[RMDB]
This 177-nucleotide RNA was probed chemically with 2A3 and DMS.
For DMS the reverse transcriptase was MarathonRT.
The data come from the RNA Mapping Database (RMDB), library TTRDES.
For DMS, 2,375 sequencing reads were counted.
The reactions ran in a buffer of 150 mM KOAc, 10 mM MgCl2 and 150 mM bicine (pH 8.5), at 24 C.
The 2A3 profile rests on 8,107 reads.
RNA sequence: GGGAACGACUCGAGUAGAGUCGAAAAGAUAUGGAUCCCAUGACUCCAUCGAUCGUACCGCUGGUCGGAAACGACCAUGUACGGGAGGAGGAGUGGGAUCCUAAGUCAAAGAUGGCUUCGGCCAUCAGCUAAUUACGACGUUCGCGUCGUAAUUAGCAAAAGAAACAACAACAACAAC
Reactivity to 2A3 in 0.01 (KOAc 150mM, MgCl2 10mM, bicine 150mM(pH8.5), 24C), signal-to-noise 3, nucleotides 027 to 126: g070a010u070a050u180g010g000a010u000c000c000c000a020u050g030a020c000u050c010c010a300u300c110g050a090u060c000g020u010a000c010c000g040c040u000g010g020u000c010g020g060a060a050a050c010g000a000c010c000a010u080g000u010a000c000g000g000g000a020g010g000a000g010g000a010g020u010g000g020g000a000u000c000c000u000a030a010g030u000c030a060a040a160g010a000u010g000g000c030u090u100c300g200g000c040c000a000u020c000a000
Reactivity to DMS in 0.01 (KOAc 150mM, MgCl2 10mM, bicine 150mM(pH8.5), 24C), signal-to-noise 3, nucleotides 027 to 126: g010a050u000a300u010g010g030a000u000c000c000c000a000u000g000a300c020u000c000c000a300u010c240g020a100u010c000g000u000a020c010c010g000c020u000g000g010u000c000g000g000a090a120a180c010g010a010c010c000a000u000g000u000a010c030g000g000g000a060g040g020a010g000g000a300g020u000g010g020g000a000u000c010c000u000a010a060g020u000c070a150a110a110g000a000u000g000g000c000u000u000c170g030g010c000c000a000u000c010a110